[RMDB]
RNA sequence: GGGAACGACUCGAGUAGAGUCGAAAAGCUGGUUUUGUAGUUGCACUUCAAGGACGAGACGACAAAAGUGUCAAGAACAACACGAUCGAUCGUACUGCCCCUACUGGUUCAAAAUCAGAACUACAACCUAAGAUCUUUGGUUCGCCAAAGAUCUUAGAAAAGAAACAACAACAACAAC
Reactivity to 2A3 in 0.01 (KOAc 150mM, MgCl2 10mM, bicine 150mM(pH8.5), 24C), signal-to-noise 3, nucleotides 027 to 126: g050c080u050g020g050u030u020u060u100g020u010a090g020u040u060g060c050a030c060u070u080c100a030a040g030g020a020c020g020a000g030a110c030g000a010c030a050a210a060a050g000u000g030u050c050a070a090g070a090a070c050a020a000c000a030c040g020a050u050c020g010a030u020c000g020u020a160c040u100g010c010c000c030c000u070a100c010u030g030g050u010u060c040a040a040a000a120u030c000a000g000a060a010c010u040a050c000a020a030c000
Reactivity to DMS in 0.01 (KOAc 150mM, MgCl2 10mM, bicine 150mM(pH8.5), 24C), signal-to-noise 3, nucleotides 027 to 126: g000c070u000g000g010u000u000u000u000g010u000a040g000u000u000g030c100a070c060u000u000c160a170a110g000g000a010c010g000a040g020a110c010g020a040c130a050a060a120a160g000u010g000u000c060a120a160g010a090a080c240a070a020c020a010c000g010a180u000c060g000a170u010c010g010u000a070c020u000g000c010c030c040c060u000a080c140u000g000g010u000u000c070a060a030a040a050u010c070a020g000a030a030c040u000a050c140a030a080c170